Structure probing data (2A3 and DMS) for a 170-nucleotide construct. For DMS the reverse transcriptase was MarathonRT. The DMS profile rests on 9,051 reads. For 2A3 the reverse transcriptase was SuperScript II with manganese. Reactivities are given for positions 27 through 129.
[RMDB]
RNA sequence: GGGAACGACUCGAGUAGAGUCGAAAAGGAAUCUCUUCUGCUUGUGACGGUCUUGCUUCAGCUUAUAGGGCGAAUUCCUUUGAUGUACCUACAUUCUGCGCAAACCGUUCUGCAAUGUGUAAUUGGUCAACGAGGAGCUUCGGCUCCUCGAAAAGAAACAACAACAACAAC
Reactivity to 2A3 in 0.01 (KOAc 150mM, MgCl2 10mM, bicine 150mM(pH8.5), 24C), signal-to-noise 3, nucleotides 027 to 129: g110g020a070a030u010c000u010c000u120u060c070u070g050c010u020u080g030u060g030a000c040g000g000u040c080u070u030g010c010u130u160c030a000g000c000u020u040a040u040a020g040g010g000c030g060a060a060u130u170c050c000u090u060u100g110a100u180g010u100a180c000c000u010a010c000a020u050u000c000u020g000c010g010c030a000a000a000c000c000g020u070u030c000u060g000c020a020a040u070g020u000g000u060a090a160u030u010g040g020u010c010a070a000
Reactivity to DMS in 0.01 (KOAc 150mM, MgCl2 10mM, bicine 150mM(pH8.5), 24C), signal-to-noise 6, nucleotides 027 to 129: g010g020a080a030u000c010u020c000u040u000c000u030g020c050u040u050g000u070g020a070c100g050g050u020c180u060u040g040c060u000u030c030a070g040c050u010u050a130u010a070g040g000g050c000g040a120a060u050u070c040c140u020u020u030g050a000u040g040u050a130c020c000u010a060c100a040u030u040c050u060g000c300g060c120a000a040a040c030c050g020u030u020c080u060g030c030a000a050u070g040u040g000u080a090a070u010u010g030g000u020c100a040a140